[RMDB]
RNA sequence: GGGAACGACUCGAGUAGAGUCGAAAAGGGGAGUGCCCAGCGGCCGACAGGAGUAAUUCCCGCCGAAACAGGGUUUUCACCCUACCUUUCUUCGGGUGUCCUUCCUCGCGCCCGCAGGACCACCCCUCGCCCCCUUUGCGCUGUCGCUUCGGCUACUACUAGGAUAAUAGUUCGCUAUUAUCCUAGUAAAAGAAACAACAACAACAAC
Reactivity to 2A3 in 0.01 (KOAc 150mM, MgCl2 10mM, bicine 150mM(pH8.5), 24C), signal-to-noise 2, nucleotides 027 to 156: g040g000g030g000a070g060u170g090c010c020c030a030g000c030g000g020c000c010g050a040c170a110g040g000a010g020u110a050a020u110u050c020c000c020g000c020c020g020a020a010a050c300a080g020g010g010u070u020u220u290c130a060c000c010c000u040a100c010c040u000u020u000c010u020u040c000g020g010g000u010g030u030c000c000u050u020c000c000u050c000g010c040g000c020c020c000g000c000a020g000g040a020c030c010a050c030c040c000c000u010c010g020c020c000c010c000c030u090u140u160g060c140g020c060u080g080u180c050g000c070u070u020c070g050g010c010u060a070c050u000